Structure probing data (DMS and 2A3) for a 207-nucleotide construct. Conditions: 150 mM KOAc, 10 mM MgCl2 and 150 mM bicine (pH 8.5), 24 C. For DMS, 1,867 sequencing reads were counted. Source: RMDB library OK3TST, as collected in RNAgym.

RNA sequence: GGGAACGACUCGAGUAGAGUCGAAAAUCAUGCAUAUUUCACAGCUGCUGGACCAGUACAAUCUUCUGAACGUACCUCUCCCAGAGGACGUCCCAGAGUCCAUCUCGGAACUCUCCGGCGAAGACCUCGUUAUGUUGAACGCGCUGAACCUCGAAAAUCCAAUAGCGGUAUUCGUACCGCUAUUGGAAAAAGAAACAACAACAACAAC
Reactivity to DMS in 0.01 (KOAc 150mM, MgCl2 10mM, bicine 150mM(pH8.5), 24C), signal-to-noise 1, nucleotides 027 to 156: u010c020a110u020g030c030a140u010a130u000u000u000c040a100c070a200g020c030u010g020c030u000g010g020a100c030c010a090g010u000a070c070a050a200u000c080u020u000c050u010g010a070a030c060g000u000a110c020c030u000c000u000c060c050c040a300g010a060g020g020a100c020g000u000c010c020c000a080g010a090g030u000c030c010a090u000c050u010c040g010g000a110a040c040u000c040u000c000c070g040g080c100g040a040a080g000a100c040c000u020c060g030u010u010a130u000g040u010u030g030a040a120c070g000c090g020c010u000g020a100a070c050c040u000c020g010a070a000a090a250
Reactivity to 2A3 in 0.01 (KOAc 150mM, MgCl2 10mM, bicine 150mM(pH8.5), 24C), signal-to-noise 1, nucleotides 027 to 156: u080c020a030u100g040c030a030u090a140u190u150u120c110a120c030a070g050c050u070g000c010u010g000g000a060c050c060a030g000u100a090c150a150a170u020c040u120u000c000u110g030a060a000c000g000u220a300c040c000u010c000u070c000c060c000a000g010a000g000g010a000c000g030u040c050c120c000a030g000a010g010u000c020c030a160u050c030u110c060g010g000a070a070c010u000c000u020c100c050g030g020c010g030a110a000g020a030c010c070u040c000g050u080u050a070u120g070u030u050g040a030a000c000g000c000g020c010u070g040a030a060c000c020u040c040g050a070a050a000a110